[RMDB]
Conditions: 150 mM KOAc, 10 mM MgCl2 and 150 mM bicine (pH 8.5), 24 C. Chemical mapping of a 177-nucleotide RNA with DMS and 2A3. The 2A3 profile rests on 10,445 reads.
RNA sequence: GGGAACGACUCGAGUAGAGUCGAAAAUUACUAGUCUCUGAUGAAUUGCUUUGACUUCUGACACCUCGUAUGAAAACUGCACGUGCAGUCUGAUUAUUUAGCAAGACUGAGGCUUAAAAUAAAUCAACCCUUAUAACACAUUCGUGUGUUAUAAGGGAAAAGAAACAACAACAACAAC
Reactivity to DMS in 0.01 (KOAc 150mM, MgCl2 10mM, bicine 150mM(pH8.5), 24C), signal-to-noise 6, nucleotides 027 to 126: u010u010a120c080u010a040g020u000c010u000c020u000g000a120u000g010a110a110u010u000g010c020u000u000u010g000a090c080u000u000c040u000g010a140c070a060c070c040u010c110g020u000a030u000g010a100a080a100a120c110u010g010c030a110c300g010u010g010c030a030g000u000c030u000g000a110u000u000a090u010u000u000a030g020c020a030a040g000a130c060u000g010a040g010g010c010u000u010a030a050a050a050u000a040a060a090u010c110a070a170
Reactivity to 2A3 in 0.01 (KOAc 150mM, MgCl2 10mM, bicine 150mM(pH8.5), 24C), signal-to-noise 4, nucleotides 027 to 126: u090u050a040c030u010a010g020u000c010u000c010u050g110a150u030g060a150a180u050u040g000c020u080u050u060g070a080c000u030u020c010u060g060a050c010a030c020c040u050c060g030u070a040u130g110a070a060a060a060c060u050g010c030a030c120g080u110g030c020a020g010u010c000u010g010a040u010u070a050u080u140u050a010g000c010a020a010g020a040c020u020g000a000g020g000c000u010u020a020a070a050a080u150a020a090a050u070c030a020a110